Chemical mapping of a 207-nucleotide RNA with 2A3 and DMS.

RNA sequence: GGGAACGACUCGAGUAGAGUCGAAAAACAUAUUACGAUAUGAUUCAGAUGGUGUCUUACUGGUUCGUACCAAGGGACAUAAUGGUUUCUUGUUUCCAACCAAAGAACAAGUGGCGAGUCUGAAUAAAAAACUGACUGCCGUUCGCGGCAGUCAGAACAUUUACACUGUCUUCGGACAGUGUAAAUGAAAAGAAACAACAACAACAAC
Reactivity to 2A3 in 0.01 (KOAc 150mM, MgCl2 10mM, bicine 150mM(pH8.5), 24C), signal-to-noise 5, nucleotides 027 to 156: a010c040a020u160a050u120u170a080c110g060a040u030a030u190g050a030u030u020c010a010g000a020u040g040g120u130g030u140c030u040u120a110c040u050g030g000u020u030c060g020u040a010c000c030a010a020g000g020g010a000c020a010u220a130a150u160g170g000u000u000u000c000u000u010g010u020u040u010c020c020a040a040c010c010a060a100a070g040a060a040c050a130a030g040u030g080g030c020g010a030g010u000c000u000g010a010a000u110a060a070a000a000a000a010c000u000g000a000c000u000g020c020c000g010u030u040c210g000c000g070g000c000a000g000u000c000a000g000a000a000
Reactivity to DMS in 0.01 (KOAc 150mM, MgCl2 10mM, bicine 150mM(pH8.5), 24C), signal-to-noise 2, nucleotides 027 to 156: a120c050a090u000a070u010u000a150c090g020a110u000a020u010g000a090u000u000c020a010g030a080u000g050g010u000g020u000c010u030u010a100c120u000g000g010u000u010c170g030u040a070c160c010a070a110g010g000g000a050c010a060u000a060a110u010g030g020u000u000u000c020u020u010g000u010u000u010c040c030a080a170c090c070a020a140a230g000a020a040c040a030a070g020u000g010g020c050g000a300g040u000c020u010g050a030a050u070a010a100a050a070a120a150c000u010g000a040c000u000g010c000c000g010u000u000c260g010c110g000g020c010a000g020u000c000a000g000a010a150
Overview:
2A3 adducts were read by reverse transcription with SuperScript II with manganese. High DMS reactivity at an A or C suggests that its Watson-Crick edge is free. Conditions: 150 mM KOAc, 10 mM MgCl2 and 150 mM bicine (pH 8.5), 24 C.